[RMDB]
Structure probing data (DMS and 2A3) for a 177-nucleotide construct.
For DMS the reverse transcriptase was MarathonRT.
2A3 adducts were read by reverse transcription with SuperScript II with manganese.
The data come from the RNA Mapping Database (RMDB), library OK2TRN.
RNA sequence: GGGAACGACUCGAGUAGAGUCGAAAAAGUGAAGUUGUACUUUUGGCGGUACGUAAAAUCCUCAAUGACUAUGAUCAAGUGGCUAUGACACUGCAAGUUGUGCGGGAGGCUUUAGCCUUGGUGAGUACAAAGUCGUACGAUUCGUCGUACGACUUUGAAAAGAAACAACAACAACAAC
Reactivity to DMS in 0.01 (KOAc 150mM, MgCl2 10mM, bicine 150mM(pH8.5), 24C), signal-to-noise 3, nucleotides 027 to 126: a090g030u000g020a060a100g010u000u000g030u000a040c030u020u000u010u000g010g010c080g010g020u000a030c080g010u010a080a050a110a080u010c010c000u000c080a180a060u010g000a040c060u000a080u000g010a090u000c080a060a060g020u010g000g000c060u000a080u000g020a080c040a030c020u000g020c020a030a090g010u000u000g010u000g010c120g030g010g000a080g010g000c060u000u000u000a080g020c020c010u000u000g020g000u010g010a090g020u010a120
Reactivity to 2A3 in 0.01 (KOAc 150mM, MgCl2 10mM, bicine 150mM(pH8.5), 24C), signal-to-noise 1, nucleotides 027 to 126: a000g100u080g080a000a000g020u090u070g000u080a010c000u080u020u030u110g100g030c020g030g020u120a030c050g020u100a050a020a020a060u010c000c000u000c000a060a030u070g000a080c040u060a100u210g010a130u170c020a070a030g000u000g080g000c020u080a080u190g050a030c000a000c010u020g010c000a060a130g020u090u110g030u070g080c080g060g000g000a030g090g070c010u100u130u150a060g020c000c040u000u050g130g020u120g090a020g000u070a040